[RMDB]
RNA sequence: GGGAACGACUCGAGUAGAGUCGAAAACUGCCUCCACGUCUGGGUAGACACCUUCUCCGGUGCGGUUUCCGUCUCCUGUAAAAAGAAAGAAACCAGCUGUGAGACUAUCAGCGCCGUUCUUCAGGCCCCUUCCUCAGGGCUUCGGCCCUGAGGAAGGAAAAGAAACAACAACAACAAC
Reactivity to 2A3 in 0.01 (KOAc 150mM, MgCl2 10mM, bicine 150mM(pH8.5), 24C), signal-to-noise 2, nucleotides 027 to 126: c030u010g030c000c020u070c020c010a050c030g090u000c020u010g030g040g030u030a050g020a080c060a080c030c000u030u010c010u000c010c000g000g000u090g010c190g000g000u020u050u030c020c020g110u020c000u030c010c050u000g060u090a190a070a040a020a000g080a000a040a000g010a140a030a000c020c000a020g020c010u010g130u140g050a040g020a060c040u100a110u180c020a040g070c000g020c090c010g100u090u030c040u110u060c000a000g010g010c000c000

Conditions: 150 mM KOAc, 10 mM MgCl2 and 150 mM bicine (pH 8.5), 24 C. An RNA of 177 nucleotides, treated with 2A3 and read out base by base. 2A3 adducts were read by reverse transcription with SuperScript II with manganese. The 2A3 profile rests on 841 reads.